[RMDB]
RNA sequence: GGGAACGACUCGAGUAGAGUCGAAAAAUCGCACCGGCUGACGCUAGAGCGAGGGCCCCAGUUCCGCGGCCGACAGGUGGCAGUGAGCUAGCUGCCGCGCAGCGUCUCGAUCACUGCGCUGAAGUCCUCGUGAAAGGCGUUUCGACGCCUUUCACGAAAAAGAAACAACAACAACAAC
Reactivity to DMS in 0.01 (KOAc 150mM, MgCl2 10mM, bicine 150mM(pH8.5), 24C), signal-to-noise 1, nucleotides 027 to 126: a080u000c020g030c020a120c000c030g000g000c040u010g000a070c100g040c060u000a020g010a220g000c000g020a120g000g010g010c130c020c020c070a050g050u050u040c060c020g040c090g010g030c010c000g010a160c150a090g000g060u010g000g010c050a090g010u000g000a010g040c090u000a060g010c030u010g000c000c110g040c180g020c090a000g000c040g000u010c040u000c140g030a180u000c020a030c060u000g000c010g020c070u000g010a040a090g000u000c010c030